RNA sequence: GGGAACGACUCGAGUAGAGUCGAAAAAUUUGUUGAUAAAUACUAUGCUUUUCUUAAUAAGCACUUUUCUAUGAUGAUACUGUCUGAUGACGGUGUCGUUUGCUAUAAUAGUGAUUAUGCAGCUAAGGGAGUCUUCGAUUCGUCGAAGACAAAAGAAACAACAACAACAAC
Reactivity to DMS in 0.01 (KOAc 150mM, MgCl2 10mM, bicine 150mM(pH8.5), 24C), signal-to-noise 4, nucleotides 027 to 129: a090u000u000u000g000u070u000g030a090u040a090a070a080u050a000c120u040a000u030g010c040u010u020u020u040c050u010u010a120a060u030a050a040g040c020a070c050u010u010u020u000c090u060a050u000g010a010u030g030a000u030a010c010u050g000u030c000u030g040a210u000g000a000c000g060g040u010g040u000c020g000u030u030u010g030c180u040a050u050a010a000u000a050g020u030g020a050u020u020a030u020g040c120a040g030c000u000a010a020g010g010g010a160
Reactivity to 2A3 in 0.01 (KOAc 150mM, MgCl2 10mM, bicine 150mM(pH8.5), 24C), signal-to-noise 8, nucleotides 027 to 129: a010u090u060u080g020u010u020g010a090u080a140a130a010u220a090c080u050a030u180g020c010u070u060u060u050c020u030u190a150a060u090a060a000g000c010a020c020u070u080u050u050c070u040a080u140g020a010u010g010a000u010a020c000u000g020u000c020u110g210a180u300g010a040c020g000g010u000g000u000c020g010u000u060u050g020c030u050a030u020a170a040u040a040g030u010g020a020u010u000a010u040g060c040a000g010c000u060a020a020g060g030g020a070

About this RNA: Chemical mapping of a 170-nucleotide RNA with DMS and 2A3. For DMS the reverse transcriptase was MarathonRT. Conditions: 150 mM KOAc, 10 mM MgCl2 and 150 mM bicine (pH 8.5), 24 C. For 2A3, 13,858 sequencing reads were counted.